Conditions: 150 mM KOAc, 10 mM MgCl2 and 150 mM bicine (pH 8.5), 24 C. The record gives the reactivity of an RNA of 177 nucleotides to DMS. The DMS profile rests on 883 reads. For DMS the reverse transcriptase was MarathonRT.

[RMDB]
RNA sequence: GGGAACGACUCGAGUAGAGUCGAAAAAUGAAUGAUUUCACAGGGGAAAAAAUCAGUGCCUUAAACACAGUAGCUGACUAUGUGAUUAAAGAGCAUCAUUUUAAGCAGUGUGUUUGACAUUAUUGAAGUCUGAAAGACAGUUCGCUGUCUUUCAGACAAAAGAAACAACAACAACAAC
Reactivity to DMS in 0.01 (KOAc 150mM, MgCl2 10mM, bicine 150mM(pH8.5), 24C), signal-to-noise 1, nucleotides 027 to 126: a030u000g000a110a070u010g000a110u000u010u010c060a120c050a150g010g000g000g010a010a030a080a010a030a020u000c080a050g010u010g000c050c070u000u010a010a000a020c020a010c010a080g000u000a110g030c060u000g010a080c200u000a060u010g010u000g010a070u030u030a080a060a050g000a170g000c110a020u020c030a030u000u000u000u000a080a050g020c030a090g030u000g000u000g010u010u010u000g000a000c060a010u000u000a120u000u000g000a070a220